[RMDB]
RNA sequence: GGGAACGACUCGAGUAGAGUCGAAAAGUUGACUUAUGGGCUAGCUUGUGCAGGAUUUGACUACAUGAUAAGACCAGACAAAUAUCCAUUCUUUAAUUCCUAUGUCAUGCACUUGACACCACUAGAGUCGUUACAAUGUGUUCGCACAUUGUAACGAAAAAGAAACAACAACAACAAC
Reactivity to DMS in 0.01 (KOAc 150mM, MgCl2 10mM, bicine 150mM(pH8.5), 24C), signal-to-noise 5, nucleotides 027 to 126: g020u000u010g010a080c020u010u000a100u010g010g000g000c050u010a090g000c070u000u000g010u010g000c030a050g010g000a120u000u020u000g020a100c070u000a070c100a100u000g000a100u000a070a080g010a060c080c030a060g010a070c110a050a040a080u010a100u010c040c010a070u000u000c040u010u010u000a070a220u000u010c020c020u000a050u010g010u000c020a030u000g020c120a050c090u000u000g010a120c060a070c090c060a080c130u010a100g010a080g010
Reactivity to 2A3 in 0.01 (KOAc 150mM, MgCl2 10mM, bicine 150mM(pH8.5), 24C), signal-to-noise 2, nucleotides 027 to 126: g020u020u050g030a040c020u050u100a040u190g030g020g000c020u040a030g020c030u040u050g030u030g060c050a020g000g070a030u030u060u150g050a040c040u060a020c050a100u080g020a050u070a100a030g050a040c010c040a000g050a080c050a040a070a010u130a020u060c030c000a030u040u020c000u020u110u030a090a090u050u020c010c010u040a070u110g030u040c000a010u030g030c030a010c000u010u010g010a050c040a010c010c020a040c010u020a040g040a030g200